[RMDB]
RNA sequence: GGGAACGACUCGAGUAGAGUCGAAAAACAGGUAAAACAACAUACGUCAUGAAAAACUUCAUCGAUACAGCAUCCCCAGCCAACAAAGUAGCAUACAUUGCACCAACACAUAAGCUAGUACAAUCAAUGGACCAAGCUAUCUGGGACAAAUACAACCCAUCCAUGCUGUGUUCGCACAGCAUGGAUGAAAAGAAACAACAACAACAAC
Reactivity to DMS in 0.01 (KOAc 150mM, MgCl2 10mM, bicine 150mM(pH8.5), 24C), signal-to-noise 1, nucleotides 027 to 156: a060c040a070g000g010u000a050a070a050a060c090a090a100c010a120u000a020c110g070u000c000a120u040g010a090a070a100a180a060c080u000u000c050a060u000c060g000a130u000a120c030a100g000c060a140u000c030c000c000c020a050g040c070c050a010a080c030a030a080a070g000u000a050g050c060a190u000a140c050a180u000u000g060c070a100c020c080a050a030c070a100c150a070u000a130a060g010c050u000a050g000u000a020c040a030a040u010c080a080a200u010g030g000a150c030c010a020a090g020c020u000a110u000c020u000g000g000g000a040c030a090a030a120u020a000c060a050a160c080c000
Reactivity to 2A3 in 0.01 (KOAc 150mM, MgCl2 10mM, bicine 150mM(pH8.5), 24C), signal-to-noise 3, nucleotides 027 to 156: a000c050a020g110g010u090a020a110a040a020c030a000a030c030a080u110a090c040g050u030c040a060u120g110a080a060a110a120a120c020u050u030c040a060u060c020g060a040u080a120c060a040g000c000a100u070c010c000c000c000a010g020c000c000a030a020c020a090a170a020g050u060a000g050c020a020u060a100c020a070u040u090g060c020a030c040c020a070a030c020a010c010a100u070a100a010g020c030u020a010g050u090a080c050a030a080u070c010a040a100u110g010g020a010c010c000a060a000g060c010u040a010u050c030u030g000g020g000a000c020a000a060a000u110a040c050a010a040c000c000